RNA sequence: GGGAACGACUCGAGUAGAGUCGAAAAGAUAUGGAGAAGGAUGCAUACUCGUUGAAACAAUAACGUCCAAUCUAUCGGAAACGAUAGAUUGGACGUUAUUGUGGAGAGUCCAUCUUCUCCUAAGUCGGAUUCAAAUACUGUUCGCAGUAUUUGAAUCAAAAGAAACAACAACAACAAC
Reactivity to DMS in 0.01 (KOAc 150mM, MgCl2 10mM, bicine 150mM(pH8.5), 24C), signal-to-noise 7, nucleotides 027 to 126: g020a070u000a300u010g000g010a010g020a010a010g010g020a030u000g030c260a090u010a300c010u000c010g010u000u020g000a110a160a020c010a010a010u000a000a000c000g010u000c000c000a000a000u000c000u000a000u000c000g010g000a120a070a080c000g020a000u000a000g000a010u010u000g000g000a000c000g000u000u000a000u000u000g000u000g000g010a030g000a040g000u010c270c010a010u000c000u000u000c000u000c000c000u000a020a060g000u000c030g020